[RMDB]
Structure probing data (2A3) for a 207-nucleotide construct. Values cover nucleotides 27 to 156.
RNA sequence: GGGAACGACUCGAGUAGAGUCGAAAACUUAAACAAGUUCGCUUGUUUAAGAAAAAAACCUUUGUGUGGAAGUUUCGAAGAACAUGCUUCCCAUUGGGAAGACAUGGGAGAAACCCACACUCUGGUAAAAAGCCUUUGCCCUUCGGGGCAAAGGCAACCGUAUAACACGGUUCGCCGUGUUAUACGGAAAAGAAACAACAACAACAAC
Reactivity to 2A3 in 0.01 (KOAc 150mM, MgCl2 10mM, bicine 150mM(pH8.5), 24C), signal-to-noise 1, nucleotides 027 to 156: c000u000u010a000a000a000c000a010a010g050u120u140c170g040c070u000u000g010u020u000u000a030a000g030a220a070a020a010a000a000a000c060c010u030u000u010g030u010g000u010g000g030a300a280g060u030u000u030c070g050a140a050g020a050a010c000a000u010g020c020u010u010c010c020c150a300u200u300g000g000g010a020a060g010a180c000a000u000g000g020g000a070g010a000a000a000c010c010c000a000c000a000c000u000c000u000g010g010u100a030a070a070a070a000g020c020c000u040u000u000g000c000c000c000u000u030c270g090g000g000g000c080a000a000a000g000g010c000a000a000